[RMDB]
RNA sequence: GGGAACGACUCGAGUAGAGUCGAAAAUAGCGAAGUAGGAUUUGAUGCGUCAAGUGUUCACAGGCUGGGGAGUCGCCGUGAAACGAAAAGCAGAAAGCGUGCUGCUUACGAUAUAAUUUCCGCACCCAUAAGAAGUCUCUGUUCGCAGAGACUUCAAACAAGACGACUGGUUCGCCAGUCGUCUUGUAAAAGAAACAACAACAACAAC
Reactivity to 2A3 in 0.01 (KOAc 150mM, MgCl2 10mM, bicine 150mM(pH8.5), 24C), signal-to-noise 1, nucleotides 027 to 156: u080a000g100c030g040a070a000g030u080a040g040g080a080u090u010u190g030a030u080g010c010g020u030c010a080a060g060u040g100u250u020c030a010c040a040g020g000c000u080g040g000g000g040a030g030u110c060g000c040c030g030u010g060a040a000a000c070g010a090a080a000a000g000c000a000g100a080a230a000g110c050g070u080g090c020u000g000c000u000u000a040c060g010a000u010a000u070a210a050u020u020u060c020c000g000c040a060c030c020c030a040u080a100a050g000a000a000g000u000c000u000c000u000g090u070u050c160g000c080a000g000a000g000a000c010u000u000c000a000a000

The record gives the reactivity of an RNA of 207 nucleotides to 2A3. Conditions: 150 mM KOAc, 10 mM MgCl2 and 150 mM bicine (pH 8.5), 24 C. Source: RMDB library M2RFPK, as collected in RNAgym.